[RMDB]
RNA sequence: GGGAACGACUCGAGUAGAGUCGAAAAGAUAUGGAAUACUACCCACCGCACGACAGUCGAAGAACUCGGAAACGAGGGAGACUGUCGUGCGAGGUAUUCCUAAGUCAAAGCGCACUUCGGUGCGCAACCAGACAUCUAAGUUCGCUUAGAUGUCUGGAAAAGAAACAACAACAACAAC
Reactivity to DMS in 0.01 (KOAc 150mM, MgCl2 10mM, bicine 150mM(pH8.5), 24C), signal-to-noise 3, nucleotides 027 to 126: g020a110u010a170u000g000g020a040a010u010a000c020u010a120c010c010c010a300c200c000g000c010a020c000g000a020c000a010g030u000c000g000a150a130g000a090a170c000u010c010g000g020a090a080a210c000g000a010g000g000g000a040g000a010c000u000g000u000c000g000u010g020c000g010a010g020g000u000a000u000u000c000c010u010a090a140g010u000c110a030a070a140g000c000g010c000a000c000u000u010c110g010g020u000g000c020g010c010a000a020
Reactivity to 2A3 in 0.01 (KOAc 150mM, MgCl2 10mM, bicine 150mM(pH8.5), 24C), signal-to-noise 3, nucleotides 027 to 126: g060a060u200a180u300g000g010a010a000u020a010c020u180a220c000c030c000a020c000c000g010c000a000c000g000a000c000a000g000u020c000g170a300a020g020a080a060c000u010c000g010g040a060a050a060c020g000a000g000g000g000a010g000a000c000u000g000u000c000g000u000g000c000g000a000g000g000u000a000u000u000c000c000u020a110a010g150u130c130a130a080a040g020c000g000c000a010c020u070u180c300g040g000u000g000c000g000c000a000a000